[RMDB]
RNA sequence: GGGAACGACUCGAGUAGAGUCGAAAAGAUAUGGAAAGGGUUUGCUCGACGAUCUCGGAAACGAGGGAGAGCAAACGACCACUUUCCUAAGUCAAAACGCGCAUAAAUGUUCGCAUUUAUGCGCGAACUACAUCAUUGAGUUCGCUCAAUGAUGUAGAAAAGAAACAACAACAACAAC
Reactivity to DMS in 0.01 (KOAc 150mM, MgCl2 10mM, bicine 150mM(pH8.5), 24C), signal-to-noise 6, nucleotides 027 to 126: g000a070u000a300u010g000g000a010a010a020g020g000g010u000u000u000g010c020u000c000g000a080c240g000a020u000c000u000c000g010g000a100a090a200c010g000a030g000g000g000a020g000a020g010c010a000a020a010c050g000a100c190c160a190c010u000u000u000c000c000u000a040a150g000u010c080a070a060a070a170c010g000c000g010c010a000u000a000a000a000u000g000u000u010c210g010c000a000u000u000u000a000u010g000c000g020c000g010a010a040
Reactivity to 2A3 in 0.01 (KOAc 150mM, MgCl2 10mM, bicine 150mM(pH8.5), 24C), signal-to-noise 5, nucleotides 027 to 126: g010a020u070a040u140g000g040a010a010a010g090g010g010u010u020u030g010c010u040c020g270a300c020g000a100u000c000u000c010g020g040a100a060a040c000g000a000g000g010g000a010g000a000g000c010a020a010a000c030g000a020c020c020a210c050u010u000u000c000c000u020a170a020g060u030c040a010a030a080a160c010g000c000g000c000a000u000a000a020a010u030g020u110u110c300g020c150a000u000u000u000a000u000g000c000g000c000g000a000a000
Source: RMDB library TTRDEL, as collected in RNAgym. Structure probing data (DMS and 2A3) for a 177-nucleotide construct. The 2A3 profile rests on 19,306 reads. DMS adducts were read by reverse transcription with MarathonRT. For DMS, 9,971 sequencing reads were counted.